The data come from the RNA Mapping Database (RMDB), library OK2TST.
The record gives the reactivity of an RNA of 177 nucleotides to DMS.
Reactivities are given for positions 27 through 126.

[RMDB]
RNA sequence: GGGAACGACUCGAGUAGAGUCGAAAAGGAGGGGAUCAUGGUCCGCAUCCUGGGGAACAUGCGGGAGGCCUGGAGUCAGGUGAUAGAUCUGAGACCCAGACUCGGCCAGAUCGAUACCAACCCCCAGCAAUCAUUGCGCUUUCGAGCGCAAUGAUUGAAAAGAAACAACAACAACAAC
Reactivity to DMS in 0.01 (KOAc 150mM, MgCl2 10mM, bicine 150mM(pH8.5), 24C), signal-to-noise 2, nucleotides 027 to 126: g010g050a160g030g000g000g020a030u000c050a100u000g070g010u050c000c010g020c050a060u000c080c010u010g010g000g020g000a210a080c280a030u000g000c070g010g010g000a100g000g020c050c010u000g010g030a130g020u000c040a110g010g010u000g000a170u010a140g010a050u010c050u010g000a190g010a180c110c010c080a030g000a080c030u000c080g000g000c010c000a020g000a020u020c030g000a300u010a060c060c040a050a180c100c000c010c030c000a120g000

Overview: Values are in units of 0.01, from 0 to 300, in steps of 10.